[RMDB]
The record gives the reactivity of an RNA of 177 nucleotides to DMS and 2A3. The reactions ran in a buffer of 150 mM KOAc, 10 mM MgCl2 and 150 mM bicine (pH 8.5), at 24 C.

RNA sequence: GGGAACGACUCGAGUAGAGUCGAAAAUAUACUCUGCCGUUAGUAUUCUUUUAAAGAUAUUAACGAGUAGGCAGGCGUAAAGGUUGCGUAGAAGCUUUGACAGUGAUGUUGAGUGGAGCAGCCUUUACAAAUCUUUGGCUUUCGAGCCAAAGAUUUGAAAAGAAACAACAACAACAAC
Reactivity to DMS in 0.01 (KOAc 150mM, MgCl2 10mM, bicine 150mM(pH8.5), 24C), signal-to-noise 2, nucleotides 027 to 126: u030a130u030a120c110u000c000u000g000c010c000g000u000u020a010g020u010a000u020u020c010u000u020u040u050a050a120a010g000a030u010a000u000u010a000a000c000g000a180g000u000a080g010g000c200a020g010g020c280g000u000a000a000a000g000g000u000u000g020c000g030u050a160g010a120a130g000c000u000u040u040g030a010c010a000g010u070g000a100u010g000u000u000g030a000g010u000g020g020a040g030c000a010g010c000c000u000u000u000a000
Reactivity to 2A3 in 0.01 (KOAc 150mM, MgCl2 10mM, bicine 150mM(pH8.5), 24C), signal-to-noise 2, nucleotides 027 to 126: u190a000u060a100c090u050c000u090g000c050c100g010u000u010a000g010u030a180u300u180c000u080u190u080u300a110a150a000g010a000u010a000u000u000a000a000c000g020a030g060u000a050g050g000c000a010g150g110c070g040u010a000a000a030g000g010u010u030g000c040g000u260a010g000a020a000g020c000u110u160u230g000a010c020a010g020u010g040a140u040g030u000u000g020a000g000u050g000g030a000g000c000a000g000c000c000u000u000u000a000